[RMDB]
RNA sequence: GGGAACGACUCGAGUAGAGUCGAAAAGAUAUGGAUACUACUAAAGGCGACGAUCUUAGUCGGAAACGACUAAGGGAGCCUGGUAGGUAUCCUAAGUCAAAGUUUAUCGUGUUCGCACGAUAAACAACACACAUGAGAGGUUCGCCUCUCAUGUGUGAAAAGAAACAACAACAACAAC
Reactivity to DMS in 0.01 (KOAc 150mM, MgCl2 10mM, bicine 150mM(pH8.5), 24C), signal-to-noise 2, nucleotides 027 to 126: g000a030u000a080u000g000g010a030u010a020c000u000a000c000u010a150a140a090g040g010c010g000a060c300g020a060u030c000u000u000a000g000u000c000g010g010a020a020a040c010g020a010c000u000a000a010g000g000g000a030g000c000c020u000g000g010u000a000g000g010u010a000u020c030c000u000a010a080g010u000c010a110a100a180g000u000u000u000a000u000c000g040u000g020u000u020c300g010c000a000c000g010a010u000a010a010a000c000a140a120
Reactivity to 2A3 in 0.01 (KOAc 150mM, MgCl2 10mM, bicine 150mM(pH8.5), 24C), signal-to-noise 2, nucleotides 027 to 126: g000a020u040a040u070g000g020a000u020a010c010u010a000c000u180a300a300a280g020g000c060g050a300c000g000a200u000c000u010u000a000g010u000c000g010g000a000a000a000c010g020a000c000u000a000a000g040g000g010a000g000c000c000u000g000g000u020a010g160g080u000a010u010c000c030u000a020a000g030u000c040a170a070a110g000u020u000u010a000u000c000g000u010g090u030u080c300g060c120a020c030g000a000u000a010a010a000c010a000a040